RNA sequence: GGGAACGACUCGAGUAGAGUCGAAAAGUUAACGCUCCAAGAUCGGUGGAUAGCAGCCCUAUCAAUAUCUAGGAGAACUGUGCUAUGUUUAGAAGAUUAGGUAGUCUCUAAACAGAACAAUUUACCUCAUACGUUAGGACGUUCGCGUCCUAACGAAGUCUCUUGAUUGCUUCGGCAAUCAAGAGACAAAAGAAACAACAACAACAAC
Reactivity to 2A3 in 0.01 (KOAc 150mM, MgCl2 10mM, bicine 150mM(pH8.5), 24C), signal-to-noise 2, nucleotides 027 to 156: g040u030u040a090a010c050g000c020u000c010c000a000a050g020a040u080c120g040g240u160g160g000a020u010a000g010c070a010g000c070c000c000u040a030u020c020a060a040u080a020u130c050u090a110g010g000a020g020a030a050c090u110g010u000g010c010u030a040u070g010u000u000u020a060g030a260a010g010a060u000u020a020g030g060u050a030g000u000c000u000c000u000a000a000a010c000a040g020a070a010c080a030a030u060u090u110a060c010c000u100c050a090u040a160c000g000u000u000a000g000g000a000c010g020u050u040c110g000c000g110u030c000c000u010a000a000c000g000a000a000
Conditions: 150 mM KOAc, 10 mM MgCl2 and 150 mM bicine (pH 8.5), 24 C. Structure probing data (2A3) for a 207-nucleotide construct. 2A3 adducts were read by reverse transcription with SuperScript II with manganese.